[RMDB]
RNA sequence: GGGAACGACUCGAGUAGAGUCGAAAAGGCGGUUCGAUUCCGCCCAGGUCCACCAGAAGCACAUUGCACGGGCAGUGCGCUUCUGAUGGGCCUGACCUGGUUUCGACAGGGGGAGAUAGGGUCGUGAAACCGUAGCAAUCUUCGGAUUGCUACGGUUAAAAGAAACAACAACAACAAC
Reactivity to 2A3 in 0.01 (KOAc 150mM, MgCl2 10mM, bicine 150mM(pH8.5), 24C), signal-to-noise 3, nucleotides 027 to 126: g000g020c000g000g000u020u030c010g010a000u000u010c000c000g000c010c000c000a000g000g000u000c000c000a000c000c010a000g000a000a000g000c010a000c000a040u010u020g000c060a070c300g140g300g000c010a010g010u000g000c000g010c000u000u000c000u000g000a010u000g000g000g000c010c000u000g000a000c000c000u000g000g000u030u100u090c000g020a000c000a060g080g000g000g000g010a080g000a020u090a050g080g020g000u010c030g000u040g070a090
Reactivity to DMS in 0.01 (KOAc 150mM, MgCl2 10mM, bicine 150mM(pH8.5), 24C), signal-to-noise 6, nucleotides 027 to 126: g010g030c000g010g000u000u000c020g000a300u010u000c010c000g030c010c010c010a000g000g000u010c000c000a010c080c000a000g000a020a010g000c010a000c000a020u000u000g020c020a300c300g040g010g000c020a000g060u000g000c070g000c010u000u000c000u000g020a020u000g000g010g020c000c000u000g010a020c020c000u000g000g010u000u020u030c110g020a090c090a100g000g000g010g020g000a060g000a090u020a140g010g000g010u010c030g000u000g000a110